The record gives the reactivity of an RNA of 207 nucleotides to DMS and 2A3. Conditions: 150 mM KOAc, 10 mM MgCl2 and 150 mM bicine (pH 8.5), 24 C. The 2A3 profile rests on 1,343 reads.
RNA sequence: GGGAACGACUCGAGUAGAGUCGAAAAGCAGCAACUCGAUCCCGAAGCUGUCGAAGUCCAGCAUGUUCUGGAAGUGGAAGGCCUCUUCCAUCUCGCCCAGAGCCGGUGCGUACCGGGCCAGGUACUGCCGCGGCCUGAGGUCGUGGUUGCCCUCGUGUCUUUAGCUGCAUUUCGAUGCAGCUAAAGAAAAAGAAACAACAACAACAAC
Reactivity to DMS in 0.01 (KOAc 150mM, MgCl2 10mM, bicine 150mM(pH8.5), 24C), signal-to-noise 1, nucleotides 027 to 156: g000c110a090g000c030a000a080c030u010c020g000a050u000c010c030c000g030a140a090g020c010u010g000u000c030g010a050a080g020u000c040c010a110g000c060a190u000g010u020u020c030u020g070g010a120a110g020u000g000g020a040a040g000g020c190c230u000c020u000u000c000c000a020u030c020u000c000g030c110c000c030a100g030a050g000c040c090g000g000u000g000c160g030u000a080c040c020g070g000g010c000c090a110g000g000u020a050c020u010g010c020c030g030c000g010g000c000c030u030g020a090g070g010u000c000g040u000g000g010u000u000g010c010c040c040u000c020g000u000g000
Reactivity to 2A3 in 0.01 (KOAc 150mM, MgCl2 10mM, bicine 150mM(pH8.5), 24C), signal-to-noise 2, nucleotides 027 to 156: g060c100a010g000c010a010a020c000u030c030g130a160u100c050c010c030g020a110a020g000c020u010g030u080c040g110a100a020g080u040c000c000a000g020c020a080u110g020u130u000c000u010g000g000a040a000g020u010g000g030a020a010g050g090c000c120u240c000u080u020c000c010a040u060c030u010c070g100c000c000c000a010g010a010g000c000c010g090g010u090g030c110g020u040a030c000c020g060g020g000c050c050a050g000g020u080a040c030u160g000c030c000g030c020g010g010c000c010u120g040a090g040g010u080c030g030u040g040g020u030u070g030c000c000c000u060c010g120u160g080
It was measured as part of the RMDB library OK3TST.